[RMDB]
RNA sequence: GGGAACGACUCGAGUAGAGUCGAAAAGCAGCGAGCUCGUGCCUGACAGCGAGUCGGAGGGUGGUGCCGGCGCGGGUGCUGCCCAUGGCAGCCACUCACCUGAUACUGAAGAUGGCGGAGCUACAUCAAAAUGGUACUGGUUCGCCAGUACCAUUUUAAAAGAAACAACAACAACAAC
Reactivity to DMS in 0.01 (KOAc 150mM, MgCl2 10mM, bicine 150mM(pH8.5), 24C), signal-to-noise 5, nucleotides 027 to 126: g000c120a130g020c130g010a040g000c020u000c010g020u010g030c020c010u000g010a150c020a040g000c110g000a110g010u000c040g000g000a100g020g000g020u000g020g010u000g020c020c010g010g000c180g020c050g010g010g030u000g020c070u020g010c020c010c240a060u010g010g010c020a080g000c030c000a010c010u000c010a140c040c000u010g020a070u000a060c030u000g010a020a130g020a300u000g000g010c000g020g010a040g010c010u000a020c070a050u010c140
Reactivity to 2A3 in 0.01 (KOAc 150mM, MgCl2 10mM, bicine 150mM(pH8.5), 24C), signal-to-noise 3, nucleotides 027 to 126: g120c090a020g090c030g200a010g000c020u020c030g180u200g030c010c010u000g010a010c020a010g030c030g150a050g040u030c010g000g030a030g000g000g020u020g000g000u020g010c020c020g050g040c120g000c080g080g090g050u170g130c120u220g000c000c000c020a030u040g000g000c030a040g230c010c000a000c000u010c000a070c000c000u020g000a010u040a070c010u030g020a020a010g160a090u130g000g000c000g010g010a000g000c010u020a020c010a080u210c090